[RMDB]
RNA sequence: GGGAACGACUCGAGUAGAGUCGAAAAGAUCACCUGUUCGCAGGUGAUCAAUCUCCCACUUGAUGGAAGUCUCACAGCCUCGUUGCCCACGAGGCACGGGCGUAUUGAUCCGCUUCGGCGGAUCAAACGGUCUCAUAUGCUUCGGCAUAUGAGACCGAAAAGAAACAACAACAACAAC
Reactivity to 2A3 in 0.01 (KOAc 150mM, MgCl2 10mM, bicine 150mM(pH8.5), 24C), signal-to-noise 1, nucleotides 027 to 126: g010a010u000c000a000c000c000u000g050u120u060c280g070c110a020g070g000u000g000a010u000c000a000a000u000c000u000c000c000c000a010c050u030u170g000a050u060g080g110a110a110g070u030c010u000c010a030c030a050g020c030c000u130c080g070u100u160g010c010c000c000a180c070g050a200g000g000c000a000c000g010g000g060c020g000u020a030u040u040g020a000u020c000c000g020c020u010u060c140g110g060c000g000g000a000u000c000a000a040a000
Reactivity to DMS in 0.01 (KOAc 150mM, MgCl2 10mM, bicine 150mM(pH8.5), 24C), signal-to-noise 1, nucleotides 027 to 126: g000a030u010c000a000c010c000u000g000u000u010c180g080c030a000g000g010u010g020a000u000c000a010a120u010c120u000c020c000c000a140c070u000u020g000a160u010g000g020a100a090g000u000c020u010c150a210c210a170g000c010c000u000c030g010u000u000g030c020c030c100a150c290g000a120g020g030c000a010c030g020g000g010c040g020u010a030u000u000g000a010u000c010c000g020c030u000u000c270g020g000c000g030g000a010u000c000a010a020a250
Structure probing data (2A3 and DMS) for a 177-nucleotide construct. The RNA was probed in 150 mM KOAc, 10 mM MgCl2 and 150 mM bicine (pH 8.5) at 24 C. For 2A3, 1,069 sequencing reads were counted. For DMS the reverse transcriptase was MarathonRT. The data come from the RNA Mapping Database (RMDB), library M2PK50.